An RNA of 207 nucleotides, treated with 2A3 and read out base by base. The reactions ran in a buffer of 150 mM KOAc, 10 mM MgCl2 and 150 mM bicine (pH 8.5), at 24 C.
RNA sequence: GGGAACGACUCGAGUAGAGUCGAAAAAGGCACACUUCUAUAUCAUUUUACAAACAGAGUGACAGAGAGGUUCACCUCUGAGCUCUGUUAGUGAACGGAGAGCUUACAGGUGAAGCGUUGUAAGAACUCCGUUCAUAGUUCUGUGAAUGCUGUGCCACUAGGUCACCACGUUCGCGUGGUGACCUAGAAAAGAAACAACAACAACAAC
Reactivity to 2A3 in 0.01 (KOAc 150mM, MgCl2 10mM, bicine 150mM(pH8.5), 24C), signal-to-noise 1, nucleotides 027 to 156: a010g110g000c000a060c000a040c010u090u100c110u090a140u080a050u170c020a040u090u190u160u210a030c010a000a060a010c000a000g000a010g050u080g300a180c000a000g000a000g030a080g130g210u300u220c160a220c130c020u000c010u000g010a000g000c000u000c000u000g000u010u000a000g000u010g000a020a000c000g000g000a000g000a010g000c000u000u000a000c000a030g100g020u180g170a220a020g060c070g140u160u030g000u010a000a000g000a040a030c000u010c000c000g000u000u000c000a010u000a000g000u010u060c100u050g060u000g040a000a000u100g030c130u000g010u000g000c000c000a000